[RMDB]
The data come from the RNA Mapping Database (RMDB), library OK3TST. The record gives the reactivity of an RNA of 207 nucleotides to 2A3 and DMS. The RNA was probed in 150 mM KOAc, 10 mM MgCl2 and 150 mM bicine (pH 8.5) at 24 C. The 2A3 profile rests on 818 reads.
RNA sequence: GGGAACGACUCGAGUAGAGUCGAAAAGAACUAGAUUAGAUGCACGUCCGACAGUUGGAAAGAUCCUAAAGGUAGUGUUCAAAGAAAAAACUAAGAGAAUGUGAUUCACAGCCAAACAAAUCUAUACAUAGGAUUCUGGUAGCAGAUGGCAGCUGCAUCAUGGUACUCGAUUCGUCGAGUACCAUGAAAAAGAAACAACAACAACAAC
Reactivity to 2A3 in 0.01 (KOAc 150mM, MgCl2 10mM, bicine 150mM(pH8.5), 24C), signal-to-noise 2, nucleotides 027 to 156: g020a010a010c020u060a020g070a110u150u080a070g020a070u010g010c040a040c060g030u010c020c000g050a030c060a080g020u040u000g020g060a120a070a030g020a030u050c030c030u110a210a030a030g050g000u030a020g010u050g010u070u060c070a030a070a170g120a000a070a020a000a000a000c080u120a070a000g080a010g070a150a110u100g000u020g060a060u110u100c060a050c020a070g030c020c010a060a090a060c050a060a100a040u050c030u090a140u050a110c090a070u130a050g060g000a000u060u010c020u090g050g000u020a030g000c050a010g000a090u090g020g000c010a010g000c070u060g000c000a000
Reactivity to DMS in 0.01 (KOAc 150mM, MgCl2 10mM, bicine 150mM(pH8.5), 24C), signal-to-noise 1, nucleotides 027 to 156: g010a120a070c060u040a080g020a180u010u000a210g000a070u000g030c070a040c080g000u000c010c010g010a070c040a000g020u000u010g000g010a170a130a050g030a140u000c000c040u010a060a090a070g000g000u000a040g000u000g010u000u000c050a020a020a240g000a010a220a110a060a040a160c050u030a090a110g010a110g030a080a080u010g030u000g000a150u010u050c090a040c060a050g020c030c020a070a050a070c010a060a030a010u000c000u000a150u000a060c060a080u000a120g000g010a100u000u000c020u000g010g000u010a110g070c000a000g020a120u000g000g000c040a100g000c070u000g030c050a260